[RMDB]
RNA sequence: GGGAACGACUCGAGUAGAGUCGAAAAAAUGCCACCAGUGAUCUGACAGGAGGCAGAGCUCAGGUGGUAAUCCUCGCUUGCCUGUCACUCGCUUCCUGCUUUGCAGCCCGGUUCCUAACAGGCCACGGACUAGGGUCGGUCUGCUGCCCAAGGGUUGAACUAGAGUAUUUUUCGAAAUACUCUAGUUAAAAGAAACAACAACAACAAC
Reactivity to 2A3 in 0.01 (KOAc 150mM, MgCl2 10mM, bicine 150mM(pH8.5), 24C), signal-to-noise 3, nucleotides 027 to 156: a010a000u130g020c030c010a040c010c000a050g050u040g090a090u050c030u050g080a070c030a050g030g020a020g030g030c080a090g020a000g020c050u050c040a020g000g020u040g000g010u050a030a070u050c020c010u030c060g020c060u090u220g030c000c020u010g010u040c040a000c040u030c010g000c010u000u040c010c000u010g030c040u120u110u110g030c000a010g000c010c000c000g050g000u230u260c030c010u070a100a060c030a070g100g000c050c020a060c080g080g020a030c030u050a050g000g000g070u020c020g010g000u000c020u020g000c030u040g010c000c000c000a030a090g110g040g000u060u120g040
Reactivity to DMS in 0.01 (KOAc 150mM, MgCl2 10mM, bicine 150mM(pH8.5), 24C), signal-to-noise 2, nucleotides 027 to 156: a080a100u020g000c010c020a080c040c010a140g000u000g010a050u020c020u010g030a090c020a100g000g000a070g020g010c020a050g020a040g010c040u000c010a060g010g030u000g030g000u000a020a050u010c070c040u010c060g010c050u000u000g010c020c000u000g020u000c010a050c020u000c020g030c020u000u000c010c010u010g010c060u000u000u000g020c040a070g000c020c000c000g040g000u010u010c000c010u000a080a120c080a110g020g020c030c040a130c080g010g010a080c120u000a120g020g030g000u000c070g010g000u000c020u000g000c020u000g010c010c010c010a090a230g010g010g000u010u000g000